Source information
Source: RMDB library RNAMAK, as collected in RNAgym. The record gives the reactivity of an RNA of 207 nucleotides to 2A3 and DMS. The reactions ran in a buffer of 150 mM KOAc, 10 mM MgCl2 and 150 mM bicine (pH 8.5), at 24 C. For DMS the reverse transcriptase was MarathonRT.
RNA sequence: GGGAACGACUCGAGUAGAGUCGAAAAUAGGGACUUCGGUCCCUACGUAUUCCUAAGUCGUAAAGGGAGACCACCGUAGGACAUGUCGGAAACGACAACAGCCUACGUGUGGUCGUUGAUCUUUACGAUAUGGACAUAAGACCUGUUCGCAGGUCAAUGUACUCUAAAUGUUCGCAUUUAGAGUACAAAAAGAAACAACAACAACAAC
Reactivity to 2A3 in 0.01 (KOAc 150mM, MgCl2 10mM, bicine 150mM(pH8.5), 24C), signal-to-noise 4, nucleotides 027 to 156: u100a000g000g000g010a010c020u050u060c300g090g000u000c000c000c000u000a010c010g010u030a110u060u020c000c000u020a150a050g020u000c000g000u000a000a000a000g010g000g000a000g000a000c000c000a000c010c010g010u010a000g000g020a070c100a170u040g000u000c020g000g050a080a060a130c030g010a000c010a030a050c070a060g020c000c000u000a010c000g020u080g000u000g040g000u000c000g000u000u000g000a000u000c000u000u000u000a000c000g000a000u000a030u040g050g020a010c030a100u230a140a060g000a010c020c000u000g050u090u080c290g000c070a000g000g000u020c000a020a030
Reactivity to DMS in 0.01 (KOAc 150mM, MgCl2 10mM, bicine 150mM(pH8.5), 24C), signal-to-noise 3, nucleotides 027 to 156: u000a020g030g020g000a030c000u000u000c280g030g000u000c000c000c000u000a010c010g000u010a150u000u000c000c000u000a090a270g010u000c020g000u000a010a030a040g000g020g000a070g040a040c010c010a030c010c000g000u000a040g040g010a070c090a300u000g010u000c000g010g020a170a120a240c000g010a030c010a020a090c100a140g010c020c000u000a030c040g020u010g030u000g010g000u000c010g000u000u010g000a040u010c010u000u000u000a010c010g010a010u000a120u000g000g020a150c120a120u010a100a140g000a030c000c010u000g000u000u020c300g010c000a000g020g060u000c000a010a070